This 177-nucleotide RNA was probed chemically with DMS and 2A3. Reactivities are given for positions 27 through 126. DMS adducts were read by reverse transcription with MarathonRT. The 2A3 profile rests on 518 reads.

RNA sequence: GGGAACGACUCGAGUAGAGUCGAAAAGGAGAUUUAAUCUGUAAACUAAGUAGAGAUUCUGGGACUGUAUCAUUCAGUGAUUCAAAGUAUUGCCUUUUUCGAAAUGGUAAUGCGUAUGAUAAUGGUACAAAAGGGGACGGUUCGCCGUCCCCUUUUGAAAAGAAACAACAACAACAAC
Reactivity to DMS in 0.01 (KOAc 150mM, MgCl2 10mM, bicine 150mM(pH8.5), 24C), signal-to-noise 2, nucleotides 027 to 126: g000g000a090g020a120u030u000u000a090a050u040c040u020g000u000a040a170a150c230u010a080a090g000u000a100g010a080g000a070u020u000c020u020g000g000g000a090c080u010g000u000a000u000c000a020u040u020c160a070g000u020g010a110u060u000c020a030a060a210g030u000a040u010u000g010c020c010u010u000u010u040u050c250g030a030a060a020u020g000g070u010a000a010u000g000c020g000u070a080u000g000a020u000a000a030u020g000g000u010a090
Reactivity to 2A3 in 0.01 (KOAc 150mM, MgCl2 10mM, bicine 150mM(pH8.5), 24C), signal-to-noise 2, nucleotides 027 to 126: g110g000a060g030a110u010u100u170a000a010u130c000u000g190u140a000a000a110c060u090a230a000g040u040a020g080a070g000a100u080u000c040u020g050g000g090a090c000u000g000u050a040u050c030a000u000u240c000a000g140u040g080a100u110u000c020a000a020a030g000u000a000u000u000g000c040c030u040u080u000u030u300c140g160a070a000a020u010g000g000u030a130a000u000g010c000g000u050a090u040g080a000u000a050a000u000g000g000u060a000